RNA sequence: GGGAACGACUCGAGUAGAGUCGAAAAGUUUAUGAUGAUUUCCACAUUUCACGACGGUCAACUGCGUUUUUCGAAUGUUUAUCGAUUAACUUUGAUGAUAUUUCGCCUGUGACAGGGCGUGGUACUGGGAGCUCUAUAAAUUCGUUUAUAGAGCUCCAAAAGAAACAACAACAACAAC
Reactivity to 2A3 in 0.01 (KOAc 150mM, MgCl2 10mM, bicine 150mM(pH8.5), 24C), signal-to-noise 9, nucleotides 027 to 126: g050u070u080u120a150u150g110a060u040g020a050u060u030u020c020c010a060c020a040u070u140u110c050a040c060g060a010c040g040g030u040c020a080a050c070u060g030c050g040u010u020u020u070u090c020g010a050a030u080g060u100u120u120a110u090c020g000a040u020u070a060a060c110u050u060u110g060a070u050g030a040u020a080u070u090u040c000g000c010c020u040g020u030g050a020c030a040g020g010g020c020g010u010g010g020u060a080c070u060g040
Reactivity to DMS in 0.01 (KOAc 150mM, MgCl2 10mM, bicine 150mM(pH8.5), 24C), signal-to-noise 5, nucleotides 027 to 126: g010u010u010u020a060u010g010a090u010g000a160u010u010u010c040c050a140c100a110u000u010u000c030a050c040g010a080c050g010g000u000c050a050a130c080u000g010c080g010u000u000u020u010u010c050g010a030a040u000g010u020u010u010a080u000c010g010a030u000u000a040a060c040u010u010u000g000a080u000g000a070u010a030u000u020u000c020g000c030c020u010g000u010g020a140c130a140g000g000g000c000g020u000g010g010u010a040c130u010g010